[RMDB]
RNA sequence: GGGAACGACUCGAGUAGAGUCGAAAAGAUAUGGAGUAUCUCGAUAAGCUCCUAUCGGAAACGAUAGAAGAGCUUUUGACGAGAGACUCCUAAGUCAAACCAUGGUUAGGUUCGCCUAACCAUGGAACCUAAUCGUACUCUUCGGAGUACGAUUAGGAAAAGAAACAACAACAACAAC
Reactivity to DMS in 0.01 (KOAc 150mM, MgCl2 10mM, bicine 150mM(pH8.5), 24C), signal-to-noise 3, nucleotides 027 to 126: g010a020u000a150u010g000g010a010g010u000a030u000c010u000c010g020a050u010a030a020g010c000u000c010c010u000a010u000c010g010g000a030a020a060c000g000a000u000a010g000a140a160g010a010g010c010u000u000u000u000g000a300c020g010a010g010a010g000a020c000u000c000c000u000a000a050g000u000c000a110a160a250c010c000a000u000g000g010u000u000a000g000g010u000u010c300g020c000c000u000a010a000c000c000a000u000g010g000a040a060
Reactivity to 2A3 in 0.01 (KOAc 150mM, MgCl2 10mM, bicine 150mM(pH8.5), 24C), signal-to-noise 3, nucleotides 027 to 126: g000a010u030a020u070g000g000a010g010u000a030u020c010u000c000g090a110u050a300a040g000c000u020c000c010u000a000u000c000g010g040a030a010a000c000g010a000u010a020g150a300a090g000a050g000c000u010u050u110u090g030a000c000g000a010g000a000g000a000c000u000c000c000u000a010a000g020u000c040a120a040a080c000c000a000u000g010g030u000u000a010g000g040u040u100c300g140c040c000u000a000a010c010c000a000u000g000g010a010a010

Background: This 177-nucleotide RNA was probed chemically with DMS and 2A3. 2A3 adducts were read by reverse transcription with SuperScript II with manganese. In probing experiments dimethyl sulfate is read out at A N1 and C N3, which are open when not base-paired.